[RMDB]
Chemical mapping of a 170-nucleotide RNA with 2A3 and DMS. Reactivities are rounded to 0.1 and cut off at 0 and 3. Values cover nucleotides 27 to 129.
RNA sequence: GGGAACGACUCGAGUAGAGUCGAAAAGUCUGUUGGUAUUAUAUCUAUGCCUUUGGGAUAUGUGUCUCAUGGUUUAGACUUAAUGCAAGCAGGGAGUGUCGUGCGUAGAGUUAACGUGCCCUACGUGAAAGACUCUAGUUCGCUAGAGUCAAAAGAAACAACAACAACAAC
Reactivity to 2A3 in 0.01 (KOAc 150mM, MgCl2 10mM, bicine 150mM(pH8.5), 24C), signal-to-noise 9, nucleotides 027 to 129: g070u020c000u000g020u020u020g060g000u020a000u000u000a010u000a000u010c000u000a000u020g020c010c000u090u110u080g030g020g010a040u100a110u300g300u210g050u030c000u000c000a010u020g000g020u010u000u000a000g000a010c000u000u000a010a000u000g000c020a020a010g000c010a000g030g030g020a110g060u140g060u100c100g040u070g040c020g010u020a010g010a030g050u060u090a170a100c150g050u150g020c010c000c000u000a010c010g030u050g110a110a070a050
Reactivity to DMS in 0.01 (KOAc 150mM, MgCl2 10mM, bicine 150mM(pH8.5), 24C), signal-to-noise 6, nucleotides 027 to 129: g010u020c010u000g020u000u000g020g020u000a000u000u000a030u010a080u000c020u020a030u030g020c000c040u000u000u000g010g010g000a030u030a060u060g040u080g050u010c000u020c020a030u000g000g000u000u000u000a000g000a040c060u000u040a010a010u000g020c000a050a030g000c000a020g000g000g000a020g000u020g010u000c060g000u030g020c040g010u000a020g010a010g040u020u030a090a090c270g000u070g030c000c030c000u000a020c040g000u000g040a070a070a090
Conditions: 150 mM KOAc, 10 mM MgCl2 and 150 mM bicine (pH 8.5), 24 C.